[RMDB]
RNA sequence: GGGAACGACUCGAGUAGAGUCGAAAACGACGGGUCUUCGGACCCGUCGAAAUAAUGCGUAGCUGGCGCUACGCAGGCAUCGAGUAGGUCGAGCCACCUACAAAAGCUUCGAGUUCGCUCGAAGCAACUCAACUAUGGUCUUCGGACCAUAGUUGAGAAAAGAAACAACAACAACAAC
Reactivity to DMS in 0.01 (KOAc 150mM, MgCl2 10mM, bicine 150mM(pH8.5), 24C), signal-to-noise 1, nucleotides 027 to 126: c030g000a000c020g040g030g000u000c000u000u000c180g010g010a010c000c010c000g000u000c000g000a000a040a060u010a120a050u000g000c000g010u010a000g000c000u010g030g000c260g010c010u010a000c010g000c000a000g000g000c110a120u000c160g000a070g050u010a020g010g030u000c030g000a080g000c040c140a090c010c010u000a020c080a080a070a090a130g010c000u000u000c000g010a010g000u000u000c260g010c010u000c000g000a010a000g000c000a010a050
Reactivity to 2A3 in 0.01 (KOAc 150mM, MgCl2 10mM, bicine 150mM(pH8.5), 24C), signal-to-noise 2, nucleotides 027 to 126: c000g030a000c020g000g040g010u000c010u050u100c250g150g050a000c020c000c000g000u020c000g010a000a000a000u090a000a060u070g000c000g010u000a000g000c050u100g300g020c120g000c080u000a010c010g010c020a010g040g000c020a130u120c070g020a040g000u070a020g050g110u070c020g010a040g040c040c080a000c000c000u010a000c000a020a110a000a020g030c000u000u000c000g010a010g050u130u070c270g070c070u000c010g000a000a000g000c000a000a010